[RMDB]
The data come from the RNA Mapping Database (RMDB), libraries RFM100 and RFMREP. An RNA of 177 nucleotides, treated with DMS and 2A3 and read out base by base. Reactivities are given for positions 27 through 126. The reactions ran in a buffer of 150 mM KOAc, 10 mM MgCl2 and 150 mM bicine (pH 8.5), at 24 C.

RNA sequence: GGGAACGACUCGAGUAGAGUCGAAAAAUAAAAGGUCCGUUUAGGUCCCUUAACUUUAUUUAAAGUAUCGGUUUGGUCCUUUCUGUUAAUUUAAUUCAAAAAAACGUUAAGUUUAGGGACCAAACUAAUACUACAAGUGUUUCGACACUUGUAGUAUAAAAGAAACAACAACAACAAC
Reactivity to DMS in 0.01 (KOAc 150mM, MgCl2 10mM, bicine 150mM(pH8.5), 24C), signal-to-noise 5, nucleotides 027 to 126: a100u010a040a070a080a100g010g010u010c020c020g020u020u020u040a090g010g000u000c100c010c050u010u010a050a070c080u000u000u010a080u040u010u020a040a050a050g010u010a070u010c080g020g010u000u000u000g000g000u000c000c000u000u000u030c100u020g010u010u000a020a020u000u000u020a020a070u020u030c110a020a000a060a120a070a100a080c210g000u000u010a020a020g010u000u010u000a030g000g000g000a000c000c000a000a000a010c010u000a080
Reactivity to 2A3 in 0.01 (KOAc 150mM, MgCl2 10mM, bicine 150mM(pH8.5), 24C), signal-to-noise 7, nucleotides 027 to 126: a000u160a000a110a010a010g020g000u020c020c020g040u130u140u150a050g000g000u050c040c010c010u020u050a050a030c010u060u090u130a120u110u190u130a100a110a040g040u030a090u220c080g020g000u000u030u030g000g020u000c000c000u020u070u080c090u070g090u060u020a010a040u040u010u090a050a060u120u140c160a040a070a090a020a050a010a020c040g010u050u030a050a030g030u040u080u060a010g000g000g000a000c010c000a000a000a000c000u000a000